[RMDB]
RNA sequence: GGGAACGACUCGAGUAGAGUCGAAAAAGGAUAGGUGUGAGAUGUCGUUGCACUCCGAGUUUCAGCAUGGACGGACUCGUUAAACAAGUCUAUGUACCAAUAGAUGCAGACGAUUAUUCGUAUGCAAUGGCUGCCUGAUUAGCACAAGUUAAUUCAGCACACUAAACGUGUUCGCACGUUUAGUGUGAAAAGAAACAACAACAACAAC
Reactivity to 2A3 in 0.01 (KOAc 150mM, MgCl2 10mM, bicine 150mM(pH8.5), 24C), signal-to-noise 6, nucleotides 027 to 156: a010g110g010a080u100a040g000g040u030g010u030g040a070g020a090u100g020u070c060g040u050u070g000c030a020c040u020c040c010g010a010g010u000u010u040c020a010g000c030a040u040g000g020a010c000g020g030a010c010u010c030g130u080u040a030a020a010c020a040a010g000u000c010u010a020u050g020u010a110c020c020a070a080u070a110g120a080u070g010c000a010g020a080c050g010a030u080u060a060u300u100c030g000u020a010u000g000c000a020a040u030g010g000c020u030g030c010c010u050g010a070u040u090a010g000c020a040c020a170a060g030u030u050a070a070u150u050c020a010g010
Reactivity to DMS in 0.01 (KOAc 150mM, MgCl2 10mM, bicine 150mM(pH8.5), 24C), signal-to-noise 2, nucleotides 027 to 156: a060g020g000a110u000a040g010g030u000g020u010g000a150g010a120u000g020u010c040g020u000u000g010c060a110c040u010c110c010g010a020g000u010u010u010c010a070g000c000a040u010g000g030a060c000g050g000a030c010u000c000g020u000u050a030a030a050c010a020a040g000u000c010u000a010u000g030u010a150c070c030a060a140u010a080g000a180u000g000c010a020g020a040c010g020a080u010u000a230u020u000c010g020u000a030u010g010c050a070a080u010g010g000c040u000g010c040c040u000g000a080u000u000a060g020c020a110c120a080a090g010u000u000a050a120u000u000c050a120g000